[RMDB]
RNA sequence: GGGAACGACUCGAGUAGAGUCGAAAAGUGGGGAAUAAACGCCUGAAAGAAGCUACCUGCAAGCUCUAUUUUUACCAGAUGCUCUUGGCUGUGCAGGUAAAAGAAGCCCUCAAUUCUUUUGACAGCUGCCUUUCUUUUAGUUGAAUUACUCCCUGAACUACCUUCAAUCUUUCGAGAUUGAAGGUAGAAAAGAAACAACAACAACAAC
Reactivity to DMS in 0.01 (KOAc 150mM, MgCl2 10mM, bicine 150mM(pH8.5), 24C), signal-to-noise 1, nucleotides 027 to 156: g050u010g020g020g010g030a040a030u000a010a050a090c040g020c070c020u020g010a040a060a050g010a070a040g010c110u000a030c010c000u000g010c020a110a070g010c010u010c120u000a050u010u010u010u010u010a140c110c070a080g000a140u000g020c110u000c040u010u010g000g000c000u030g000u010g000c020a010g000g000u000a020a050a030a090g010a130a030g000c000c040c150u000c010a060a100u000u000c070u000u010u000u010g030a080c060a050g010c010u010g000c050c090u000u000u000c020u000u000u000u000a040g010u000u000g000a050a210u000u000a030c040u000c000c020c010u000g000a090a240
Reactivity to 2A3 in 0.01 (KOAc 150mM, MgCl2 10mM, bicine 150mM(pH8.5), 24C), signal-to-noise 2, nucleotides 027 to 156: g050u050g000g000g010g030a000a010u080a050a060a020c060g030c010c030u030g010a000a030a000g010a030a000g000c020u030a030c000c000u000g000c000a010a010g000c020u060c030u200a230u170u200u030u130u140a110c070c090a080g050a250u120g040c020u090c040u200u200g040g000c000u030g030u010g170c000a010g010g000u050a000a010a000a010g010a010a000g060c040c050c000u000c020a030a130u110u110c010u100u170u020u070g120a080c070a040g000c000u010g010c010c020u000u100u040c000u030u080u030u080a020g010u030u040g020a000a050u060u040a050c010u020c000c020c000u010g040a030a040